Chemical mapping of a 177-nucleotide RNA with DMS and 2A3.
The 2A3 profile rests on 6,585 reads.
For 2A3 the reverse transcriptase was SuperScript II with manganese.
The RNA was probed in 150 mM KOAc, 10 mM MgCl2 and 150 mM bicine (pH 8.5) at 24 C.
DMS adducts were read by reverse transcription with MarathonRT.
[RMDB]
RNA sequence: GGGAACGACUCGAGUAGAGUCGAAAAGCUCGGAGACGAGCAAGGCUGACAAAACCCUGUCCCAACCUCCACGUGGUGUCGGCUGGAUAAUGCUGCAUUAUGUUGCAUUUAUCAACUGGGAAUGAAAAAUGACUACGCUAUUCGUAGCGUAGUCAUUAAAAGAAACAACAACAACAAC
Reactivity to DMS in 0.01 (KOAc 150mM, MgCl2 10mM, bicine 150mM(pH8.5), 24C), signal-to-noise 3, nucleotides 027 to 126: g000c010u010c010g000g000a240g000a200c000g010a000g010c000a160a020g000g010c020u000g000a050c090a030a060a090a110c050c010c070u000g020u010c030c000c040a060a110c060c020u010c040c050a100c160g000u030g030g000u000g000u000c040g020g050c030u000g030g000a040u010a000a010u000g000c010u000g000c010a200u060u050a070u050g000u000u000g000c010a000u000u000u000a000u000c000a050a120c030u000g000g010g010a140a080u020g000a020a150a040
Reactivity to 2A3 in 0.01 (KOAc 150mM, MgCl2 10mM, bicine 150mM(pH8.5), 24C), signal-to-noise 7, nucleotides 027 to 126: g020c000u000c000g030g030a100g030a060c020g010a000g000c000a000a030g040g000c020u020g010a010c030a020a190a050a080c010c000c020u000g030u010c000c000c000a030a040c030c040u080c030c050a100c100g090u170g030g000u010g020u020c010g010g000c000u020g030g000a000u010a020a010u010g020c020u020g000c020a070u070u130a140u300g030u010u020g000c000a010u040u070u100a040u040c010a010a050c050u100g000g000g030a030a100u140g080a050a090a030